Conditions: 150 mM KOAc, 10 mM MgCl2 and 150 mM bicine (pH 8.5), 24 C. Structure probing data (2A3 and DMS) for a 177-nucleotide construct. DMS adducts were read by reverse transcription with MarathonRT. For 2A3 the reverse transcriptase was SuperScript II with manganese. For 2A3, 3,486 sequencing reads were counted.

RNA sequence: GGGAACGACUCGAGUAGAGUCGAAAAGAUAUGGACUUCCUGUGAUACCAGAACUACAGACAACGUCGGAAACGACGUAGUCUGCUGGUGGAGGAAGUCCUAAGUCAAAGACAUGUUCGCAUGUCAACGAUAAGUCUUGCUUCGGCAAGACUUAUCGAAAAGAAACAACAACAACAAC
Reactivity to 2A3 in 0.01 (KOAc 150mM, MgCl2 10mM, bicine 150mM(pH8.5), 24C), signal-to-noise 3, nucleotides 027 to 126: g040a030u090a040u150g010g020a000c020u020u210c020c000u300g160u080g300a030u080a050c000c000a020g060a100a110c240u300a080c300a000g000a010c000a050a010c040g000u000c010g040g030a070a030a100c010g000a000c000g000u030a020g000u010c000u000g040c000u000g000g000u000g030g030a020g020g000a000a000g000u000c000c000u000a010a000g040u000c020a060a070a060g020a000c000a020u020g020u100u130c300g000c150a000u010g000u000c040a040a020
Reactivity to DMS in 0.01 (KOAc 150mM, MgCl2 10mM, bicine 150mM(pH8.5), 24C), signal-to-noise 2, nucleotides 027 to 126: g000a060u000a300u010g020g000a010c000u000u010c000c020u000g010u000g000a230u010a030c020c000a000g020a110a040c100u000a300c010a010g010a020c000a130a010c040g010u010c000g000g020a120a050a260c000g000a020c000g010u000a030g010u000c020u000g010c000u000g000g000u010g000g000a050g000g000a000a000g010u010c000c000u000a030a070g000u000c070a100a160a170g000a010c000a000u000g030u020u020c250g060c000a010u010g000u000c000a080a240